The record gives the reactivity of an RNA of 207 nucleotides to 2A3. Values cover nucleotides 27 to 156. It was measured as part of the RMDB library OK3TST. The reactions ran in a buffer of 150 mM KOAc, 10 mM MgCl2 and 150 mM bicine (pH 8.5), at 24 C.
RNA sequence: GGGAACGACUCGAGUAGAGUCGAAAAAGCUGGGCGCCGAAACCGGAACCCUGCCCGGACCACAUCGGAGAGUCGGCGCACAACUGCCGGUGCUGCUGGGCUGACGUCAAAGCCGGCCUAAGACCACAAACCCACAUCGGAAAACACCACGAAGCCGUCUUAUCUCAACCUUCGGGUUGAGAUAAGAAAAAGAAACAACAACAACAAC
Reactivity to 2A3 in 0.01 (KOAc 150mM, MgCl2 10mM, bicine 150mM(pH8.5), 24C), signal-to-noise 1, nucleotides 027 to 156: a050g030c020u020g000g030g040c020g000c010c010g140a160a120a090c020c000g040g050a050a060c100c000c000u050g090c040c000c000g050g000a090c020c040a050c040a250u130c060g040g010a080g030a010g150u000c000g000g040c030g000c000a030c010a000a050c020u020g030c020c020g000g030u040g030c040u020g000c010u040g020g060g000c020u090g080a090c020g030u090c090a020a100a050g030c000c000g000g000c000c000u140a160a020g030a010c120c000a050c090a100a090a110c000c010c000a000c040a030u030c020g000g000a010a130a000a020c030a040c070c000a000c100g030a060a000g000c000c020g020